[RMDB]
RNA sequence: GGGAACGACUCGAGUAGAGUCGAAAAUAGUUGUGAGUAUGCACAAGAGGGUGUUUGUAUUACCACAAAUGGCUCGUGGGCCAUUUUUAAUGACCACCAUCUUAAUAGACCUGGUGUCUAUUGUGGCGUAUCAUAACUUGUUCGCAAGUUAUGAUACAAAAGAAACAACAACAACAAC
Reactivity to DMS in 0.01 (KOAc 150mM, MgCl2 10mM, bicine 150mM(pH8.5), 24C), signal-to-noise 5, nucleotides 027 to 126: u000a080g010u010u010g010u000g000a140g010u000a040u010g020c020a050c080a080a050g020a040g000g010g010u000g000u000u010u010g020u000a040u010u000a090c210c120a080c190a020a020a040u000g000g010c020u000c110g020u020g020g000g010c010c000a000u000u000u000u000u020a040a080u000g000a070c100c020a030c020c130a040u000c070u000u010a050a040u000a010g000a010c010c040u000g020g020u010g010u000c010u000a020u000u000g010u000g000g020c180
Reactivity to 2A3 in 0.01 (KOAc 150mM, MgCl2 10mM, bicine 150mM(pH8.5), 24C), signal-to-noise 3, nucleotides 027 to 126: u140a030g050u040u070g000u010g020a070g060u150a050u150g020c040a020c020a060a020g010a050g040g060g000u030g030u010u100u040g040u040a050u080u100a040c050c040a030c010a040a030a020u010g020g000c000u040c080g050u200g040g010g050c000c000a020u010u010u020u010u020a060a050u060g040a020c000c000a000c000c000a030u020c040u060u100a070a060u030a030g000a000c010c030u100g220g010u200g010u040c030u000a020u000u070g070u060g070g000c090
This 177-nucleotide RNA was probed chemically with DMS and 2A3.
Values cover nucleotides 27 to 126.
The RNA was probed in 150 mM KOAc, 10 mM MgCl2 and 150 mM bicine (pH 8.5) at 24 C.